[RMDB]
RNA sequence: GGGAACGACUCGAGUAGAGUCGAAAAUAGAAGAAGAGGCUAGGUGGUAUCCCGGUGUGGGAUACUUGGUAAUAUGUAACGCUAAUUGCAUAAGAUUGUAGGACGGAAUUUACAGUCUUGGUUUUUAAAAACUUCUCGUAGUUCGCUACGAGAAGAAGUUAAAAACGUUCUUCGGAACGUUUUUAACAAAAGAAACAACAACAACAAC
Reactivity to DMS in 0.01 (KOAc 150mM, MgCl2 10mM, bicine 150mM(pH8.5), 24C), signal-to-noise 1, nucleotides 027 to 156: u000a090g000a090a040g020a110a160g020a050g070g040c040u000a040g050g020u000g010g000u000a010u000c010c030c000g020g050u010g090u000g030g030g000a000u000a000c000u000u000g060g010u000a090a110u000a080u010g010u000a050a130c010g010c120u000a050a050u010u020g010c020a070u010a030a000g030a050u000u000g020u010a020g010g010a180c080g010g020a110a300u000u010u000a010c050a010g010u000c010u000u000g010g000u000u000u070u010u000a020a020a080a130a110c010u000u000c010u000c000g020u000a030g050u000u000c240g020c010u010a000c010g000a020g010a010a020g000a010a050
Reactivity to 2A3 in 0.01 (KOAc 150mM, MgCl2 10mM, bicine 150mM(pH8.5), 24C), signal-to-noise 3, nucleotides 027 to 156: u110a000g020a060a020g010a040a010g010a030g030g040c060u060a030g040g040u060g020g020u040a010u010c000c010c040g110g110u210g070u180g040g030g010a000u000a010c010u010u050g000g000u060a080a070u040a070u160g070u060a060a010c040g020c100u070a110a090u090u050g000c000a020u020a110a030g030a010u040u030g020u020a010g000g110a020c080g030g030a020a020u030u120u060a040c010a010g010u000c000u010u020g020g000u020u040u040u110u150a050a120a010a030a020c000u000u000c000u000c000g000u000a000g020u030u020c100g000c080u000a000c000g000a000g000a000a000g010a000a000

Source information:
Conditions: 150 mM KOAc, 10 mM MgCl2 and 150 mM bicine (pH 8.5), 24 C. An RNA of 207 nucleotides, treated with DMS and 2A3 and read out base by base.